[RMDB]
RNA sequence: GGGAACGACUCGAGUAGAGUCGAAAAUAGAAGAAAAUGCAGAUUAAUGCUGCAUUUUAUGACAUAAAAUACAGCAGCGAUAGUUAGUAGUUAUGAUAGCCUUCGGGAAGCCAGAGCAAAUACUAAAGAAUUAAUUUGAGUUCGCUCAAAUUAAUUCAAAAGAAACAACAACAACAAC
Reactivity to 2A3 in 0.01 (KOAc 150mM, MgCl2 10mM, bicine 150mM(pH8.5), 24C), signal-to-noise 7, nucleotides 027 to 126: u100a010g090a100a010g040a040a020a000a000u030g000c000a000g060a090u180u220a160a030u300g060c020u000g000c000a000u000u000u000u000a060u040g020a010c010a010u130a050a100a070a010u160a050c030a030g030c000a010g010c020g090a050u080a090g090u050u010a030g020u030a010g010u030u110a060u110g070a070u070a030g030c000c000u010u020c040g010g010g040a050a010g020c010c030a020g000a010g060c020a060a070a030u080a060c040u100a070a050a050
Reactivity to DMS in 0.01 (KOAc 150mM, MgCl2 10mM, bicine 150mM(pH8.5), 24C), signal-to-noise 5, nucleotides 027 to 126: u030a100g020a170a070g010a020a010a010a020u000g000c020a010g000a080u020u040a090a110u040g010c000u010g000c010a000u000u000u000u000a030u020g000a170c130a120u010a050a020a050a070u020a050c070a070g000c030a020g010c090g000a070u010a050g000u000u020a070g010u010a030g000u010u010a040u010g010a060u020a060g000c050c020u010u010c060g010g010g000a080a070g010c090c020a090g010a080g020c070a060a080a060u030a060c080u020a050a100a140

Conditions: 150 mM KOAc, 10 mM MgCl2 and 150 mM bicine (pH 8.5), 24 C.
The record gives the reactivity of an RNA of 177 nucleotides to 2A3 and DMS.
Values cover nucleotides 27 to 126.